[RMDB]
RNA sequence: GGGAACGACUCGAGUAGAGUCGAAAAAGUAACGGCGAGUGAAGACGGAGUAGCCCAAGGUUCAAUCCUGGAUCUCUUCGAGGUCAGGAGAUUUAACCUAAGGACUGGGGGAACUCGGUGUCGGCAUGAUUGAUGUAUAUUUCGAUAUACAUCAAUCAAAAGAAACAACAACAACAAC
Reactivity to DMS in 0.01 (KOAc 150mM, MgCl2 10mM, bicine 150mM(pH8.5), 24C), signal-to-noise 9, nucleotides 027 to 126: a080g010u020a080a080c070g010g000c030g010a070g010u000g000a100a110g010a080c060g010g000a090g010u010a110g010c020c010c030a140a030g010g010u000u000c180a050a070u000c000c000u000g010g010a010u000c000u000c010u040u020c260g010a020g010g010u000c000a030g000g000a090g000a080u010u000u000a020a020c010c010u010a100a120g020g010a060c070u010g000g010g010g010g020a130a080c040u000c030g000g010u010g010u000c030g000g000c120a120u010
Reactivity to 2A3 in 0.01 (KOAc 150mM, MgCl2 10mM, bicine 150mM(pH8.5), 24C), signal-to-noise 9, nucleotides 027 to 126: a000g110u090a070a020c020g030g010c030g010a040g040u100g060a090a020g040a030c050g040g020a050g030u070a030g040c000c000c010a020a010g000g000u000u010c010a010a010u010c020c010u050g130g060a030u010c010u000c030u170u260c240g010a000g000g000u000c010a010g020g030a080g000a020u010u010u020a000a000c000c000u020a060a090g070g020a040c060u050g010g000g000g010g040a040a050c010u000c030g020g050u060g020u030c020g030g020c030a050u070
This 177-nucleotide RNA was probed chemically with DMS and 2A3.